[RMDB]
RNA sequence: GGGAACGACUCGAGUAGAGUCGAAAAAGGAGAGCGCUUCAUGCGAGGAAUCAACGUAAAUAAAGGCACCAACAGUUGAUAAGUGAGCGAGUCGUCUUUUACUUUACGAGCGGCAAAUUAAUACAUAAGAUCCUCUGAAAUUCGUUUCAGAGGAUCUAAAAGAAACAACAACAACAAC
Reactivity to DMS in 0.01 (KOAc 150mM, MgCl2 10mM, bicine 150mM(pH8.5), 24C), signal-to-noise 2, nucleotides 027 to 126: a050g020g040a090g020a050g030c080g020c070u010u010c100a100u000g010c030g010a100g010g000a140a050u000c040a090a050c040g000u010a050a070a090u010a040a070a030g020g020c060a040c050c040a060a040c090a110g030u010u010g010a070u030a060a070g000u000g010a070g000c000g010a080g020u000c020g010u010c020u000u000u000u000a140c160u010u040u000a050c040g010a110g020c070g030g000c060a070a030a030u010u010a070a120u000a080c090a040u030a100
This 177-nucleotide RNA was probed chemically with DMS. The reactions ran in a buffer of 150 mM KOAc, 10 mM MgCl2 and 150 mM bicine (pH 8.5), at 24 C.